[RMDB]
RNA sequence: GGGAACGACUCGAGUAGAGUCGAAAACGAAUAGAAUUCGUUCUAUUCGAAUGACUGCUAAAAGCAGAGUUGACUGCGCCGAGCACAAACGGCAAAGGAAAAAGUAGCCCAGAUUCGUCUGGGCUAAUGAUGUUAUUGUUUUCGAACAAUAACAUCAAAAAGAAACAACAACAACAAC
Reactivity to 2A3 in 0.01 (KOAc 150mM, MgCl2 10mM, bicine 150mM(pH8.5), 24C), signal-to-noise 4, nucleotides 027 to 126: c000g000a000a000u000a000g000a010a020u060u020c120g050u080u000c010u000a020u000u000c000g000a030a020u110g050a030c010u000g020c020u060a050a070a090a050g010c010a020g040a060g130u090u080g150a130c010u010g010c010g000c000c000g030a040g060c090a040c070a250a130a020c030g000g000c030a020a080a000g070g020a070a130a020a000a000g070u030a000g000c000c010c000a010g000a010u040u080c150g010u000c040u000g000g000g000c000u000a000a000
Reactivity to DMS in 0.01 (KOAc 150mM, MgCl2 10mM, bicine 150mM(pH8.5), 24C), signal-to-noise 9, nucleotides 027 to 126: c010g010a020a010u000a010g010a020a040u000u020c190g030u000u000c000u000a010u000u000c000g010a090a120u000g010a150c020u000g010c010u000a080a080a090a180g010c010a010g000a180g020u010u010g010a170c010u000g010c300g020c010c010g020a100g010c110a100c250a060a090a100c020g000g000c010a040a230a080g010g010a060a050a080a100a090g000u000a020g000c000c000c000a000g000a040u000u010c190g010u000c000u000g000g000g010c000u000a000a010